Chemical mapping of a 177-nucleotide RNA with 2A3 and DMS.
For 2A3 the reverse transcriptase was SuperScript II with manganese.
The data come from the RNA Mapping Database (RMDB), library TTRDEL.
DMS adducts were read by reverse transcription with MarathonRT.

RNA sequence: GGGAACGACUCGAGUAGAGUCGAAAAGAUAUGGAGAGAACGAUAAGCACGGUGUCGGAAACGACACACGUGCUUUUGACGUUCACUCCUAAGUCAAAAGUUGCCGUCCGUUCGCGGACGGCAACAACAAAUAUUACAAGUUCGCUUGUAAUAUUUGAAAAGAAACAACAACAACAAC
Reactivity to 2A3 in 0.01 (KOAc 150mM, MgCl2 10mM, bicine 150mM(pH8.5), 24C), signal-to-noise 1, nucleotides 027 to 126: g000a010u070a020u130g000g000a010g000a000g000a020a000c010g040a040u030a160a010g020c000a010c020g030g000u000g000u010c000g040g000a110a030a020c010g010a010c000a030c010a020c010g010u000g010c000u010u000u000u000g020a000c000g000u000u010c000a020c010u000c000c000u010a080a030g070u000c050a100a030a030a160g010u000u020g000c030c000g030u000c020c010g030u070u090c300g010c060g140g000a030c000g000g090c000a000a000c000a000a000
Reactivity to DMS in 0.01 (KOAc 150mM, MgCl2 10mM, bicine 150mM(pH8.5), 24C), signal-to-noise 2, nucleotides 027 to 126: g010a030u000a300u000g000g000a020g030a110g010a010a010c000g010a140u000a010a010g020c000a000c000g020g020u000g000u010c000g000g000a080a070a150c000g010a010c000a000c000a030c020g030u000g000c000u000u000u000u010g020a130c060g000u000u000c000a100c000u000c000c000u000a010a090g020u000c020a100a090a090a110g010u000u000g010c000c000g000u000c000c010g020u010u010c230g020c010g010g000a010c000g000g010c000a000a000c000a030a110